[RMDB]
RNA sequence: GGGAACGACUCGAGUAGAGUCGAAAAACACGGAGACGCAAGCGUCUACCACGGUGCGAGGAACAACGUGAGUUCGGUGAUUAAGAAGUUACUACCAACUAUCCCCGAAGAGCUGUCCGCCGAAGAGCUUUACAGGCGCCUGCUAGUAGCUUAUCGCGUUUGUAUGCUCUUUCGAGAGCAUACAAACAAAAGAAACAACAACAACAAC
Reactivity to 2A3 in 0.01 (KOAc 150mM, MgCl2 10mM, bicine 150mM(pH8.5), 24C), signal-to-noise 2, nucleotides 027 to 156: a000c060a040c100g150g000a060g060a030c030g000c060a030a080g050c000g010u010c030u070a100c020c030a060c020g050g000u050g030c090g040a070g000g070a070a040c030a010a040c060g050u030g050a130g050u020u010c050g000g010u020g010a040u060u150a120a120g050a050a000g060u030u120a060c060u040a050c020c040a050a050c020u080a070u040c030c030c000c000g000a020a030g000a020g000c000u030g040u090c040c020g000c010c010g050a050a030g020a020g050c000u070u070u130a080c030a060g030g000c000g000c000c000u040g000c000u010a030g040u050a010g030c020u070u090a040u140c170g020c020
Reactivity to DMS in 0.01 (KOAc 150mM, MgCl2 10mM, bicine 150mM(pH8.5), 24C), signal-to-noise 1, nucleotides 027 to 156: a080c030a100c040g000g000a080g040a070c040g000c030a070a100g010c050g000u000c010u020a110c000c020a000c070g040g030u000g000c000g000a250g010g000a190a080c050a040a030c000g000u030g000a100g000u000u000c040g030g030u010g020a080u000u010a080a040g020a120a120g020u000u000a090c040u010a100c080c020a040a130c110u000a140u000c030c010c010c040g000a080a150g010a040g010c020u010g030u000c090c010g000c100c010g000a040a120g000a040g040c000u010u000u000a080c030a150g000g030c000g040c010c010u010g000c000u000a120g000u000a050g010c000u010u000a220u000c070g000c300

This 207-nucleotide RNA was probed chemically with 2A3 and DMS. The reactions ran in a buffer of 150 mM KOAc, 10 mM MgCl2 and 150 mM bicine (pH 8.5), at 24 C.